[RMDB]
RNA sequence: GGGAACGACUCGAGUAGAGUCGAAAAGAGGAUUCAACGAGCUUCGUAGCAACGAUAGCAACGUAGCUUUUGCUACGACCCCAGCUAUCGAGGGCAGCUACGUCCCGUGCUCGAGGGGAGAAUCCGACGAUUUACUAGUAUUCGUACUAGUAAAUCGAAAAGAAACAACAACAACAAC
Reactivity to 2A3 in 0.01 (KOAc 150mM, MgCl2 10mM, bicine 150mM(pH8.5), 24C), signal-to-noise 9, nucleotides 027 to 126: g130a020g010g000a010u010u010c040a110a080c060g020a010g020c020u060u060c030g050u070a000g000c010a050a070c020g010a010u000a010g000c010a050a090c020g010u010a000g000c010u130u200u230u300g000c000u010a000c010g170a180c020c010c000c010a010g000c010u010a010u020c010g030a140g020g100g030c060a060g010c040u050a030c010g030u060c020c030c020g050u060g000c000u010c010g020a070g040g040g030g010a110g000a010a000u000c010c000g010a020
Reactivity to DMS in 0.01 (KOAc 150mM, MgCl2 10mM, bicine 150mM(pH8.5), 24C), signal-to-noise 9, nucleotides 027 to 126: g010a170g010g010a020u000u000c010a140a170c070g010a100g010c040u000u010c010g020u000a010g010c010a140a210c040g010a020u000a010g010c010a100a130c020g020u000a010g000c000u000u010u000u010g020c000u000a000c010g010a190c100c070c060c110a150g010c010u000a010u000c010g000a100g010g010g020c190a120g000c050u000a030c050g010u000c050c040c080g010u010g020c010u000c010g000a080g000g010g010g000a140g010a020a010u000c000c000g010a180

This 177-nucleotide RNA was probed chemically with 2A3 and DMS. The 2A3 profile rests on 62,033 reads. The RNA was probed in 150 mM KOAc, 10 mM MgCl2 and 150 mM bicine (pH 8.5) at 24 C. Values cover nucleotides 27 to 126.